An RNA of 207 nucleotides, treated with 2A3 and read out base by base. Values cover nucleotides 27 to 156. The reactions ran in a buffer of 150 mM KOAc, 10 mM MgCl2 and 150 mM bicine (pH 8.5), at 24 C.
RNA sequence: GGGAACGACUCGAGUAGAGUCGAAAACAGGAGCUUAGCAUAGCUCCAUUCUACUAUGCAGCUAGUCGUCGUUUUCGACGUCUAGGAUAGACCUCUACAGCAGGGUCCAUGAACUGCUGAUUACCGCAUCUCGUAGCGCGGGUUCUGGCUACGUACACGUGACCUACUACUUCGGUAGUAGGUCACGAAAAGAAACAACAACAACAAC
Reactivity to 2A3 in 0.01 (KOAc 150mM, MgCl2 10mM, bicine 150mM(pH8.5), 24C), signal-to-noise 1, nucleotides 027 to 156: c100a030g020g020a000g050c000u030u030a060g050c060a070u060a030g000c020u000c000c000a000u020u010c010u030a090c000u000a090u050g120c050a130g120c000u000a000g000u000c020g000u000c010g000u030u050u190u240c010g000a000c000g000u000c000u000a000g030g000a020u030a020g000a000c000c030u040c150u200a150c100a020g000c000a000g000g000g000u000c100c000a270u270g030a130a090c000u010g000c000u010g010a140u070u210a110c010c030g060c020a050u010c060u020c090g000u000a000g000c010g010c020g170g000g000u060u090c030u060g050g000c010u000a020c020g000u060a100c080a010